[RMDB]
RNA sequence: GGGAACGACUCGAGUAGAGUCGAAAAUGCUGUGCACUACUUAGUACGCGCGUAGUUGCAGGCAUUCCGGGUGCAGCAACUGACGCGGAAGACUUUUCCCAGAGUGUGCGCUUCAACUGGCGUGCUGGAUAGUCCGUGUGUUCGCACACGGACUAUCAAAAGAAACAACAACAACAAC
Reactivity to DMS in 0.01 (KOAc 150mM, MgCl2 10mM, bicine 150mM(pH8.5), 24C), signal-to-noise 1, nucleotides 027 to 126: u000g000c080u040g020u000g020c020a040c040u000a080c120u010u010a080g020u020a080c090g050c020g020c120g000u000a020g020u000u000g020c000a170g000g000c000a010u000u010c070c250g030g080g060u000g020c050a040g000c000a020a050c000u000g010a020c000g010c030g000g020a040a110g010a060c140u000u000u000u000c020c000c020a200g000a060g000u010g000u000g010c000g020c010u000u020c000a090a050c170u010g000g000c030g000u010g020c030u020g020
Reactivity to 2A3 in 0.01 (KOAc 150mM, MgCl2 10mM, bicine 150mM(pH8.5), 24C), signal-to-noise 2, nucleotides 027 to 126: u080g000c030u160g000u020g140c010a010c040u210a000c000u110u040a020g020u040a060c070g000c000g010c040g200u000a000g020u010u010g000c030a070g020g100c000a000u050u020c040c110g200g070g040u030g010c040a040g000c010a020a040c010u140g060a030c020g010c050g030g010a060a010g060a070c000u060u050u070u070c020c050c000a000g050a010g030u070g000u010g000c010g010c040u140u050c060a240a140c080u040g000g000c010g030u030g000c040u090g060

Structure probing data (DMS and 2A3) for a 177-nucleotide construct. DMS adducts were read by reverse transcription with MarathonRT. It was measured as part of the RMDB library RFMREP. Conditions: 150 mM KOAc, 10 mM MgCl2 and 150 mM bicine (pH 8.5), 24 C. For 2A3 the reverse transcriptase was SuperScript II with manganese.